[RMDB]
RNA sequence: GGGAACGACUCGAGUAGAGUCGAAAAUGAUCGAGAGAUCUAACGAUGUACGCGAGUCAAAAGCACAGACUCGAGCGAAAGCUCGGUCGAAAGACCGCGUACAUCGGUCGGCAAGUGUAGAGUCAAAAUAUACUCGGGCUUUCGAGCCCGAGUAUAUAAAAGAAACAACAACAACAAC
Reactivity to DMS in 0.01 (KOAc 150mM, MgCl2 10mM, bicine 150mM(pH8.5), 24C), signal-to-noise 1, nucleotides 027 to 126: u010g010a000u000c030g000a290g010a280g030a000u000c010u000a080a110c010g000a000u010g010u000a000c010g010c020g000a080g010u000c000a040a010a080a300g020c190a170c250a060g000a000c020u010c010g000a020g020c030g000a100a120a160g010c000u000c000g030g030u000c030g040a040a040a160g000a030c010c040g040c000g000u010a000c010a040u000c000g010g010u000c030g030g010c040a040a130g010u010g030u000a160g000a030g000u000c010a060a100a060
Overview:
This 177-nucleotide RNA was probed chemically with DMS. For DMS the reverse transcriptase was MarathonRT. For DMS, 780 sequencing reads were counted. The reactions ran in a buffer of 150 mM KOAc, 10 mM MgCl2 and 150 mM bicine (pH 8.5), at 24 C.